RNA sequence: GGGAACGACUCGAGUAGAGUCGAAAAGUCGUCUCCACCGGCGAACCUUGCGGAGCAUCCGCAGUCUGGCGUGUCCGCGCACACGGAUUCCGUUCGGCUCAGGACCUGCACUGCUCGAUCCGCACCAUCCUGAUGUGCGAUCCGUGCCUUAACCACCCUCCCGAUCUCCAUUCGUGGAGAUCGGGAGAAAAGAAACAACAACAACAAC
Reactivity to 2A3 in 0.01 (KOAc 150mM, MgCl2 10mM, bicine 150mM(pH8.5), 24C), signal-to-noise 1, nucleotides 027 to 156: g020u020c000g060u050c030u040c060c000a050c020c030g020g000c030g000a060a010c030c010u030u130g020c010g000g020a040g030c050a040u060c100c000g000c030a040g040u060c110u040g010g080c000g010u030g060u040c000c060g010c010g000c020a000c000a000c040g000g070a070u120u150c040c060g000u120u190c060g000g000c000u020c050a070g100g010a100c030c020u040g090c100a050c040u060g070c050u000c040g070a050u080c070c040g040c000a010c040c010a120u100c000c020u130g050a120u130g060u000g020c000g040a000u140c130c060g090u030g000c040c010u120u170a140a060c080c000a090c070c050